[RMDB]
RNA sequence: GGGAACGACUCGAGUAGAGUCGAAAAGGAUGCUGUUGCUUUGAGUAUGACUGUUGAGCAGCUGGAGAGGCGUGGCUGUAAUAACUAUUCAAAGCAUUAGCAACAUUUGGAUCAUUACUAGCCAUGAACCUGUUUUGGCUGUUUGCAACCAAGUUAGCCCAUAAUGUUAGUUCGCUAACAUUAUGGGAAAAGAAACAACAACAACAAC
Reactivity to 2A3 in 0.01 (KOAc 150mM, MgCl2 10mM, bicine 150mM(pH8.5), 24C), signal-to-noise 9, nucleotides 027 to 156: g100g020a070u090g010c020u010g010u030u010g020c070u060u040u040g060a060g050u140a120u180g080a090c060u070g030u060u050g030a020g010c000a000g000c010u020g040g020a110g010a030g050g030c100g040u030g010g000c000u000g010u000a020a020u040a070a030c120u080a020u020u020c010a000a000a030g010c030a060u100u150a030g030c030a020a050c030a070u020u020u020g010g000a010u050c010a010u030u050a030c070u170a030g000c000c000a020u030g020a120a190c030c040u120g140u100u070u030u040g010g000c000u000g010u020u050u080g070c020a020a010c010c000a030a020g040u050u060a040g090
Reactivity to DMS in 0.01 (KOAc 150mM, MgCl2 10mM, bicine 150mM(pH8.5), 24C), signal-to-noise 5, nucleotides 027 to 156: g020g020a120u000g010c000u000g030u000u000g020c000u000u000u000g010a080g030u000a090u010g010a080c040u000g020u000u010g020a210g020c020a060g010c020u000g000g020a100g020a100g040g020c040g020u000g000g000c000u000g020u000a030a070u000a040a090c040u000a030u000u000c010a020a020a030g000c040a150u000u000a160g020c060a070a060c050a160u000u000u010g010g010a190u000c300a080u000u000a020c030u000a050g020c000c020a090u010g000a080a120c040c020u000g000u000u010u000u000g030g030c030u000g010u000u000u010g010c030a040a070c030c040a060a100g000u000u000a100g010

Chemical mapping of a 207-nucleotide RNA with 2A3 and DMS.